[RMDB]
RNA sequence: GGGAACGACUCGAGUAGAGUCGAAAACAGCUGCGGCUUCGGCGUCAGGUCGAAAUCAUAGGUUAGAAGUCCCUCGGUGAUCUUGGGACUGACCUUCUGGGUGCCGCCUGCCGUAUGCGCCAGCGCAAGAAUUGUCGGCGGCUCCGGCUCGACGAUGUCUCUCAUAUGUCUUCGGACAUAUGAGAGAAAAAGAAACAACAACAACAAC
Reactivity to 2A3 in 0.01 (KOAc 150mM, MgCl2 10mM, bicine 150mM(pH8.5), 24C), signal-to-noise 2, nucleotides 027 to 156: c040a050g000c030u040g010c010g050g000c030u090u070c070g000g010c030g070u090c040a030g000g110u070c050g080a030a070a060u230c090a120u140a090g000g030u080u050a120g040a240a000g070u000c000c030c010u000c030g190g070u220g090a150u120c010u060u030g010g000g000a020c000u010g010a000c000c000u050u070c020u050g070g000g050u090g030c010c000g040c010c000u020g020c000c000g010u050a100u220g010c010g040c040c050a110g010c050g030c080a050a080g000a060a100u000u100g060u050c030g020g050c000g030g060c040u040c050c040g040g000c060u080c100g010a020c000g040a040u100g040
Reactivity to DMS in 0.01 (KOAc 150mM, MgCl2 10mM, bicine 150mM(pH8.5), 24C), signal-to-noise 2, nucleotides 027 to 156: c030a300g000c010u010g010c060g020g030c010u010u010c030g030g040c030g030u000c070a050g020g010u000c050g010a070a060a130u000c080a120u000a000g020g030u000u020a100g020a120a040g000u000c000c000c000u000c160g030g010u020g000a090u020c050u000u000g040g050g010a110c000u000g000a050c010c010u000u000c000u000g000g000g020u010g030c030c030g030c050c010u000g050c050c050g030u010a050u000g000c020g000c080c080a150g020c060g030c040a090a130g030a160a120u000u000g030u000c110g010g010c010g010g050c030u010c130c110g010g020c060u000c010g020a060c030g000a150u020g000